[RMDB]
Chemical mapping of a 207-nucleotide RNA with 2A3 and DMS. For 2A3 the reverse transcriptase was SuperScript II with manganese. The DMS profile rests on 2,222 reads. The RNA was probed in 150 mM KOAc, 10 mM MgCl2 and 150 mM bicine (pH 8.5) at 24 C.
RNA sequence: GGGAACGACUCGAGUAGAGUCGAAAAAUUUUAUGAACGAUGUUACGAGAAUUAUACAGCAAUACACCCCGAUUAUCCAGUAACAUAUAAUAACUUUAUGAGCUUGAUUCAGCAGUAUCUUUACCAAGAUUACACACUACCACAAAAUCAAUUAGCGGACUUAAUCUUUUUUCGAAAAGAUUAAGUCAAAAGAAACAACAACAACAAC
Reactivity to 2A3 in 0.01 (KOAc 150mM, MgCl2 10mM, bicine 150mM(pH8.5), 24C), signal-to-noise 3, nucleotides 027 to 156: a000u120u120u070u080a080u080g050a060a010c050g010a000u010g000u060u030a000c000g000a010g030a100a050u070u070a090u060a200c020a010g020c000a030a040u050a080c070a110c040c030c000c020g040a110u110u100a020u120c010c000a040g010u010a030a050c000a010u050a010u020a100a050u060a060a050c020u050u080u080a050u170g040a030g030c010u010u010g070a010u110u040c030a020g020c000a000g020u030a050u040c030u000u090u050a060c010c000a030a000g010a050u080u160a010c020a000c000a010c030u090a050c020c030a030c030a030a060a060a030u170c000a020a040u290u300a070g060c190g040
Reactivity to DMS in 0.01 (KOAc 150mM, MgCl2 10mM, bicine 150mM(pH8.5), 24C), signal-to-noise 2, nucleotides 027 to 156: a080u000u010u020u020a100u010g030a140a140c080g020a050u010g020u050u000a040c040g000a120g030a050a110u020u020a100u000a070c030a100g010c050a080a160u000a120c100a100c020c010c000c050g010a080u010u010a050u010c030c030a300g010u010a030a050c020a020u010a080u020a130a070u010a050a040c070u000u000u000a090u030g010a090g050c020u010u010g000a050u000u000c020a070g090c050a080g000u010a120u000c010u010u000u000a080c030c080a020a040g000a120u000u000a050c040a070c030a080c040u010a080c020c020a020c030a050a060a080a090u020c020a020a130u000u010a080g040c080g020